[RMDB]
RNA sequence: GGGAACGACUCGAGUAGAGUCGAAAAAGCAACGAGUGUGAGUGGGACGUUUUAUCCCAAGCUCUGAGUAGAGCACGCGCUCACACACACCGCGAGCGAGCAUCAGCAGAGCGCAAACGCUGGUAAAUAUUAUUCAAGACUUCGGUCUUGAAUAAUAAAAAGAAACAACAACAACAAC
Reactivity to DMS in 0.01 (KOAc 150mM, MgCl2 10mM, bicine 150mM(pH8.5), 24C), signal-to-noise 6, nucleotides 027 to 126: a090g010c060a100a060c070g020a190g010u000g000u000g000a040g040u010g010g000g010a070c050g000u000u010u000u010a140u010c020c030c030a080a100g020c000u000c010u000g000a170g020u010a050g010a020g030c010a110c080g010c070g000c010u000c000a010c010a090c010a080c050a030c030c020g010c030g000a180g000c050g010a100g000c060a040u000c040a060g010c030a080g000a100g010c060g000c100a060a100a130c110g010c010u000g010g010u010a060a060a110
Reactivity to 2A3 in 0.01 (KOAc 150mM, MgCl2 10mM, bicine 150mM(pH8.5), 24C), signal-to-noise 3, nucleotides 027 to 126: a000g060c060a050a050c030g050a070g060u000g000u000g000a010g000u050g000g040g040a040c020g010u040u050u120u250a080u060c020c000c000a000a010g000c000u010c020u070g280a200g160u300a030g140a000g000c010a000c050g090c010g000c000u000c000a010c000a000c010a000c010a000c010c030g050c030g030a020g020c010g010a020g030c020a070u060c020a010g050c020a030g040a040g170c050g030c080a080a070a030c060g020c050u050g000g000u040a040a080a030
An RNA of 177 nucleotides, treated with DMS and 2A3 and read out base by base. For DMS the reverse transcriptase was MarathonRT. The reactions ran in a buffer of 150 mM KOAc, 10 mM MgCl2 and 150 mM bicine (pH 8.5), at 24 C. Reactivities are given for positions 27 through 126.